The record gives the reactivity of an RNA of 177 nucleotides to 2A3 and DMS.

[RMDB]
RNA sequence: GGGAACGACUCGAGUAGAGUCGAAAACUUAGUGAGUUCGCUCACUAAGGGACUCUGGAACCCAGGCUGGAGAGGGACCAUGUAGGAGGCUGGGCACCACCAACAUUCAGCGCUUCGGCGCUGAAAAGAUUAAUUUAUAGUUCGCUAUAAAUUAAUCAAAAGAAACAACAACAACAAC
Reactivity to 2A3 in 0.01 (KOAc 150mM, MgCl2 10mM, bicine 150mM(pH8.5), 24C), signal-to-noise 2, nucleotides 027 to 126: c000u000u000a000g000u000g020a000g020u020u110c150g070c120u000c000a010c010u010a000a000g000g010g000a030c030u030c050u110g010g070a080a060c000c000c000a020g070g000c030u040g020g050a090g020a060g040g020g020a040c030c030a080u120g040u070a070g000g120a020g030g030c000u010g010g030g000c000a020c000c020a010c020c010a020a100c010a070u000u050c010a020g000c010g010c010u050u100c220g120g000c010g000c000u000g000a000a010a000a010
Reactivity to DMS in 0.01 (KOAc 150mM, MgCl2 10mM, bicine 150mM(pH8.5), 24C), signal-to-noise 3, nucleotides 027 to 126: c000u000u000a010g020u010g000a020g010u010u010c230g030c000u000c000a010c000u000a010a020g000g010g000a120c100u000c040u010g000g000a090a090c050c020c010a070g010g020c040u000g000g010a050g010a100g000g000g000a120c060c050a070u010g000u010a070g000g010a080g000g020c040u000g010g000g000c060a080c060c050a090c070c040a070a060c130a150u000u000c000a000g010c010g000c000u000u000c210g000g010c010g010c010u010g000a000a010a070a110